Chemical mapping of a 177-nucleotide RNA with DMS and 2A3.
[RMDB]
RNA sequence: GGGAACGACUCGAGUAGAGUCGAAAAACGGUAAUCAAGAGAGCAAGCUGAUCAUCUUGGCAUCGCAAGGACCUGUGGAGCUGGUACGAAUCAUGCGUUCGUAUGAUUAUGAGAAGCUCCUGUGGACCAAACUCCUCUUAUUCGUAAGAGGAGUUUGAAAAGAAACAACAACAACAAC
Reactivity to DMS in 0.01 (KOAc 150mM, MgCl2 10mM, bicine 150mM(pH8.5), 24C), signal-to-noise 9, nucleotides 027 to 126: a090c050g010g010u010a090a090u000c050a050a060g010a080g010a070g010c050a110a110g010c140u000g000a060u000c050a090u000c040u000u000g000g010c130a040u000c040g010c090a090a110g010g010a110c010c020u010g020u000g010g010a020g010c000u000g000g010u000a130c270g000a010a010u000c000a010u000g000c010g010u010u020c200g020u000a010u000g000a020u000u000a030u000g010a140g010a140a050g000c000u000c000c010u000g020u000g000g000a140c110
Reactivity to 2A3 in 0.01 (KOAc 150mM, MgCl2 10mM, bicine 150mM(pH8.5), 24C), signal-to-noise 6, nucleotides 027 to 126: a000c040g010g020u050a050a060u110c030a040a020g020a000g000a000g070c050a130a020g060c110u100g050a080u050c030a050u000c060u020u030g020g000c010a040u040c020g040c110a080a090g060g020a080c000c010u100g090u100g060g000a010g000c010u030g030g030u070a030c060g000a000a000u020c010a030u040g020c020g160u190u210c050g000u070a000u010g020a020u030u050a080u160g070a080g010a060a010g010c000u000c000c010u030g030u060g010g010a020c020
2A3 is a SHAPE reagent: it acylates the 2'-hydroxyl of flexible nucleotides of all four kinds.
2A3 adducts were read by reverse transcription with SuperScript II with manganese.
DMS adducts were read by reverse transcription with MarathonRT.
The DMS profile rests on 17,642 reads.